[RMDB]
Background:
The data come from the RNA Mapping Database (RMDB), library OK3TST. This 207-nucleotide RNA was probed chemically with 2A3 and DMS. The reactions ran in a buffer of 150 mM KOAc, 10 mM MgCl2 and 150 mM bicine (pH 8.5), at 24 C. Values are in units of 0.01, from 0 to 300, in steps of 10. For 2A3 the reverse transcriptase was SuperScript II with manganese.
RNA sequence: GGGAACGACUCGAGUAGAGUCGAAAAAGAAUGAGAGUUAUGAUGUGGACUUCCAAGUCCUAAUGUAGAAAUUAAAACAUAGGAUGACAAGCGACUUGGUAUAUAUAGAGCAUGGGGGGGCCUUACACCACCCCACCUGCCAUCAAAUCACACGUCGCACCCUAUAAAGGUUCGCCUUUAUAGGGUGAAAAGAAACAACAACAACAAC
Reactivity to 2A3 in 0.01 (KOAc 150mM, MgCl2 10mM, bicine 150mM(pH8.5), 24C), signal-to-noise 3, nucleotides 027 to 156: a010g120a040a080u170g030a030g000a000g110u090u070a060u190g030a000u060g040u060g030g010a010c010u160u020c060c030a020a010g010u020c000c030u040a160a040u060g020u050a030g150a120a100a070u150u130a070a130a040a000c040a030u060a040g060g050a040u100g040a010c040a130a000g080c020g070a000c010u010u030g000g060u000a040u000a000u000a000u030a080g060a010g000c020a100u160g000g000g000g000g000g000g020c000c000u010u020a040c050a020c010c010a080c010c000c010c000a010c000c000u000g000c010c010a000u110c040a030a030a020u060c030a000c010a000c090g030u050c020g000
Reactivity to DMS in 0.01 (KOAc 150mM, MgCl2 10mM, bicine 150mM(pH8.5), 24C), signal-to-noise 1, nucleotides 027 to 156: a090g000a110a140u000g000a090g040a120g000u000u000a110u000g030a080u010g020u000g020g010a080c070u010u000c060c040a070a210g020u010c000c030u000a010a070u000g040u000a180g020a070a070a160u010u000a050a080a070a100c050a070u010a080g020g010a090u010g010a120c050a050a090g010c070g010a070c020u000u000g010g000u000a090u010a090u000a130u000a080g010a170g030c040a070u010g000g000g000g010g010g130g000c030c040u010u020a070c100a010c100c040a060c000c000c000c000a030c010c010u000g020c030c020a020u030c090a040a100a060u000c030a070c010a050c090g050u000c010g000